Chemical mapping of a 207-nucleotide RNA with DMS and 2A3. Source: RMDB library M2RFPK, as collected in RNAgym. High DMS reactivity at an A or C suggests that its Watson-Crick edge is free. 2A3 adducts were read by reverse transcription with SuperScript II with manganese.

RNA sequence: GGGAACGACUCGAGUAGAGUCGAAAAUAGAAGAAGAGGCUAGGUGGUAUUCCGGUGUGGGAUACUUGGUAAUAUGUAACGCUAAUUGCAUAAGACUGUAGGACGGAAUUUACAGUCUUGGUUUUUAAAAACUUCUCGUAGUUCGCUACGAGAAGAAGGUUAUUCUAUAGUUCGCUAUAGAAUAACCAAAAGAAACAACAACAACAAC
Reactivity to DMS in 0.01 (KOAc 150mM, MgCl2 10mM, bicine 150mM(pH8.5), 24C), signal-to-noise 1, nucleotides 027 to 156: u000a080g000a060a090g030a120a130g000a070g000g030c000u000a060g040g030u000g010g010u000a070u010u010c040c030g000g090u000g030u000g000g030g010a070u010a010c030u000u020g050g030u010a050a110u010a100u020g000u000a050a140c070g010c050u010a050a120u000u010g000c020a110u000a060a010g000a010c000u010g020u000a050g020g000a200c040g000g010a090a300u000u000u000a030c000a030g000u010c000u000u000g000g000u020u000u000u000u020a040a070a050a090a120c000u000u000c000u010c000g030u000a010g000u010u010c300g010c010u000a030c000g000a000g000a020a010g000a020a030
Reactivity to 2A3 in 0.01 (KOAc 150mM, MgCl2 10mM, bicine 150mM(pH8.5), 24C), signal-to-noise 4, nucleotides 027 to 156: u110a020g040a060a010g030a030a020g010a000g050g010c060u080a020g050g020u030g020g020u070a060u050u060c050c030g070g060u130g020u110g060g030g010a030u030a080c020u000u080g040g020u040a030a050u070a080u150g070u060a080a010c030g010c120u050a080a090u090u100g010c010a020u020a150a010g010a000c000u000g000u010a020g050g050a020c090g030g030a050a030u070u090u020a010c000a000g000u000c000u000u020g020g000u010u010u020u060u160a060a110a010a030a030c000u010u000c000u000c000g000u010a010g030u050u050c170g000c110u000a000c010g000a000g000a000a000g000a000a000